[RMDB]
RNA sequence: GGGAACGACUCGAGUAGAGUCGAAAAGGGGUCGAUUAAUUACAUCCGAGGUUACGGGAGGUCCUCUGAAGCCUCCACGGAGGACCUUUGAUCGUAACUACCCACCGGACCAAUCGACGGAGGCACCCAAAGCACAUCGUCUUCGGACGAUGUGCAAGUAUCUUCUGGUCUUCGGACCAGAAGAUACAAAAGAAACAACAACAACAAC
Reactivity to 2A3 in 0.01 (KOAc 150mM, MgCl2 10mM, bicine 150mM(pH8.5), 24C), signal-to-noise 1, nucleotides 027 to 156: g060g010g020g050u010c020g010a010u040u100a120a150u210u220a230c130a140u010c000c000g010a020g000g010u000u010a000c010g020g050g020a010g000g020u000c000c000u020c000u010g050a110a050g020c000c010u000c000c000a000c000g010g020a000g010g000a000c000c000u040u050u090g030a030u040c000g000u000a010a000c000u020a040c060c060c010a070c040c000g000g010a020c020c050a010a010u000c000g010a020c020g000g040a000g010g020c010a030c080c000c020a040a080a020g000c020a000c000a000u010c000g000u000c010u030u080c250g120g010a000c000g000a000u010g000u000g000c000a000a000